[RMDB]
RNA sequence: GGGAACGACUCGAGUAGAGUCGAAAACGUUGACUGAUUGUACUCACCAGCUGGCUAAUAUCAUAAUUAACAAAGUUGCUACUAUGUCUGCAAAGUUUAAUCGAAUAAUUUGCCAGUGAUAUGAUGACCUUAAUCAUACCUUCGGGUAUGAUUAAGGAAAAGAAACAACAACAACAAC
Reactivity to 2A3 in 0.01 (KOAc 150mM, MgCl2 10mM, bicine 150mM(pH8.5), 24C), signal-to-noise 1, nucleotides 027 to 126: c020g060u040u130g100a100c030u030g010a240u130u060g030u100a030c030u040c020a000c030c000a030g000c010u000g000g000c030u030a060a000u010a080u050c040a080u030a290a020u040u090a030a000c000a000a230a030g130u060u010g060c010u010a080c030u170a190u300g160u100c100u000g000c000a000a000a110g010u050u050u160a010a000u040c010g000a050a030u110a080a080u000u000u030g000c000c000a000g000u000g060a020u010a040u070g070a040u050g040a030
Reactivity to DMS in 0.01 (KOAc 150mM, MgCl2 10mM, bicine 150mM(pH8.5), 24C), signal-to-noise 3, nucleotides 027 to 126: c090g000u010u000g000a100c110u000g000a080u020u010g010u010a150c120u000c030a030c030c100a290g000c000u000g000g000c020u000a030a040u000a030u010c200a090u000a120a030u000u000a020a030c030a050a110a110g020u000u000g020c000u000a050c120u010a180u010g010u010c150u000g010c020a020a010a110g020u000u000u000a010a020u000c090g000a060a040u020a050a040u000u000u000g010c000c000a010g020u000g000a110u000a160u000g000a030u000g000a160
Structure probing data (2A3 and DMS) for a 177-nucleotide construct. Values cover nucleotides 27 to 126. For 2A3 the reverse transcriptase was SuperScript II with manganese. The RNA was probed in 150 mM KOAc, 10 mM MgCl2 and 150 mM bicine (pH 8.5) at 24 C. Source: RMDB library RFMREP, as collected in RNAgym. The DMS profile rests on 1,885 reads.